[RMDB]
RNA sequence: GGGAACGACUCGAGUAGAGUCGAAAAUUUACGCUCAAACUUAUGCGUAUCCGAUAUGUUCGCAACUUGCUGCGUACAUUUCAAUUCGGCAUAAUGUUUUAAAUUGUCUCUACCGUUUUCAAAAAUAAUUACGUCCGUGAUUCGUCACGGACGUAAUAAAAGAAACAACAACAACAAC
Reactivity to 2A3 in 0.01 (KOAc 150mM, MgCl2 10mM, bicine 150mM(pH8.5), 24C), signal-to-noise 4, nucleotides 027 to 126: u010u000u040a060c090g050c110u150c190a030a020a000c010u000u020a010u020g000c010g020u040a060u060c100c050g010a010u000a000u040g020u000u090c030g020c020a150a200c160u300u300g080c130u050g000c020g000u000a000c000a000u040u080u030c010a030a070u000u060c040g100g000c030a010u020a000a060u260g050u030u010u010u040a060a090a050u030u050g050u000c010u010c000u050a030c000c020g030u040u040u000u040c010a060a060a020a070a040u260a070
Reactivity to DMS in 0.01 (KOAc 150mM, MgCl2 10mM, bicine 150mM(pH8.5), 24C), signal-to-noise 1, nucleotides 027 to 126: u000u000u070a000c300g000c140u050c300a070a080a000c010u000u000a020u000g020c020g000u070a010u000c300c180g030a010u050a020u000g020u010u000c000g050c010a000a170c130u050u020g100c140u020g000c000g000u000a000c000a000u020u000u000c000a170a070u000u020c040g050g000c020a010u000a000a060u050g030u000u000u000u000a040a040a000u040u000g000u010c000u000c000u000a170c030c100g040u020u050u010u000c030a030a090a060a070a120u030a110